[RMDB]
An RNA of 207 nucleotides, treated with DMS and 2A3 and read out base by base.
For 2A3 the reverse transcriptase was SuperScript II with manganese.
The RNA was probed in 150 mM KOAc, 10 mM MgCl2 and 150 mM bicine (pH 8.5) at 24 C.
The DMS profile rests on 3,373 reads.

RNA sequence: GGGAACGACUCGAGUAGAGUCGAAAAUUCGAAGCUUCCUUUGGCUAUUACCCGGUGGAAACAACUGAAGCUUCAACGCCUUUUUUUCCUAUCUUCUUUAGCACCGGGCUAGGGAGUAAGCCCGUGGAACCUUAGUUUUGUUCCCUCGGGACUUACUAGAAAACAUAAUGUUCGCAUUAUGUUUUCUAAAAGAAACAACAACAACAAC
Reactivity to DMS in 0.01 (KOAc 150mM, MgCl2 10mM, bicine 150mM(pH8.5), 24C), signal-to-noise 1, nucleotides 027 to 156: u000u000c130g020a050a070g000c010u020u000c020c140u000u010u030g050g010c040u000a110u000u020a070c010c000c020g040g010u000g010g000a260a120a080c030a030a100c070u000g000a050a080g020c010u000u000c020a050a090c120g030c030c000u000u000u000u000u000u000u000c020c000u030a130u000c020u000u000c050u000u010u000a160g050c030a050c020c000g020g020g020c010u000a070g010g020g040a140g040u000a020a010g030c000c000c010g030u000g020g010a010a020c010c090u010u010a190g000u010u000u020u000g010u000u000c050c000c050u020c040g050g040g040a070c000u000u000a010c020u000
Reactivity to 2A3 in 0.01 (KOAc 150mM, MgCl2 10mM, bicine 150mM(pH8.5), 24C), signal-to-noise 3, nucleotides 027 to 156: u120u090c070g010a010a000g010c000u000u020c010c000u010u030u040g070g000c100u170a160u180u110a070c000c000c000g000g000u000g010g100a190a150a040c010a030a010c030u020g010a010a000g000c000u000u010c020a030a030c030g150c020c010u120u140u090u020u020u110u160c060c010u110a230u160c070u170u010c020u060u140u050a020g000c010a010c020c040g000g000g000c000u020a010g000g040g000a030g010u000a000a010g000c000c000c010g000u030g000g010a010a010c010c020u110u100a150g050u170u240u210u250g000u010u000c000c020c000u030c020g000g000g020a070c000u000u020a010c000u010